An RNA of 207 nucleotides, treated with 2A3 and DMS and read out base by base.
Reactivities are given for positions 27 through 156.
The reactions ran in a buffer of 150 mM KOAc, 10 mM MgCl2 and 150 mM bicine (pH 8.5), at 24 C.
For DMS, 4,301 sequencing reads were counted.
For 2A3 the reverse transcriptase was SuperScript II with manganese.
For DMS the reverse transcriptase was MarathonRT.
[RMDB]
RNA sequence: GGGAACGACUCGAGUAGAGUCGAAAAACGGGCUAGAGUCGCAAGACCGGUAGCAAUACCGACAGAGGUCAUAUACGUCAGUUAAGCCUUGGUGGUGUCACGACAUCCGGGUCGAAAAUCUAGUGAAUCGCCGUAGUGCAGCGUGUUCGUCCGCGUCGAUCCGAUUUAUGUUCGCAUAAAUCGGAUCAAAAGAAACAACAACAACAAC
Reactivity to 2A3 in 0.01 (KOAc 150mM, MgCl2 10mM, bicine 150mM(pH8.5), 24C), signal-to-noise 4, nucleotides 027 to 156: a000c010g020g000g000c040u040a010g000a020g100u040c030g000c050a080a050g060a050c020c010g000g000u020a010g000c040a060a070u010a060c020c010g040a020c040a030g100a020g010g000u060c050a010u090a010u040a150c060g030u040c060a100g020u110u140a080a010g020c010c000u010u030g010g010u030g020g000u050g030u040c050a030c070g050a050c010a020u020c010c020g020g010g060u030c020g050a030a030a030a070u080c050u060a040g050u040g090a040a040u060c100g000c030c020g030u050a050g030u040g060c030a020g010c030g000u040g040u040u060c050g020u010c030c030g070c040g070u050c070
Reactivity to DMS in 0.01 (KOAc 150mM, MgCl2 10mM, bicine 150mM(pH8.5), 24C), signal-to-noise 2, nucleotides 027 to 156: a110c070g010g030g030c020u010a070g020a060g030u000c050g030c060a210a100g020a090c040c010g010g020u010a060g000c170a100a150u010a020c040c020g020a080c030a250g050a080g050g030u000c000a160u000a140u000a060c050g000u060c050a110g000u010u010a140a170g000c010c000u000u000g040g030u000g010g020u000g020u000c040a080c050g000a050c040a080u000c000c050g010g010g030u000c020g010a070a050a050a080u000c030u010a110g010u000g020a050a070u010c010g020c000c010g010u000a060g010u000g040c070a090g000c010g010u010g060u010u010c060g020u000c020c010g000c000g030u000c100